This 207-nucleotide RNA was probed chemically with 2A3. For 2A3 the reverse transcriptase was SuperScript II with manganese. The 2A3 profile rests on 1,216 reads. Source: RMDB library M2RFPK, as collected in RNAgym. Conditions: 150 mM KOAc, 10 mM MgCl2 and 150 mM bicine (pH 8.5), 24 C.
[RMDB]
RNA sequence: GGGAACGACUCGAGUAGAGUCGAAAAUCGAAAUCAUCGGGAGUGAUCCAGAUGACGGUCCUGCCAUGAGACCGCCACGAGAGCAUGUCGCAUCGAAUGGACUCGGGGAGUCGGCAGCUUGCCCCACUAAGGCAGACGUUGUUCGCAACGUCUGCAACUAGAGUGACUCGUUCGCGAGUCACUCUAGAAAAGAAACAACAACAACAAC
Reactivity to 2A3 in 0.01 (KOAc 150mM, MgCl2 10mM, bicine 150mM(pH8.5), 24C), signal-to-noise 2, nucleotides 027 to 156: u070c000g000a010a010a050u020c000a000u020c050g000g010g000a020g030u150g050a090u000c000c000a020g010a020u060g000a030c040g010g040u020c020c000u020g050c010c040a110u180g040a020g030a110c030c070g000c040c000a070c040g040a020g010a000g030c050a020u060g050u210c100g000c140a070u140c080g020a040a000u030g030g050a020c020u000c110g030g000g010g000a030g030u050c070g020g000c000a010g000c030u080u140g050c010c000c020c000a060c060u130a100a060g110g010c010a000g000a000c010g000u000u000g050u100u100c300g030c060a000a000c000g000u000c000u000g030c010a000a000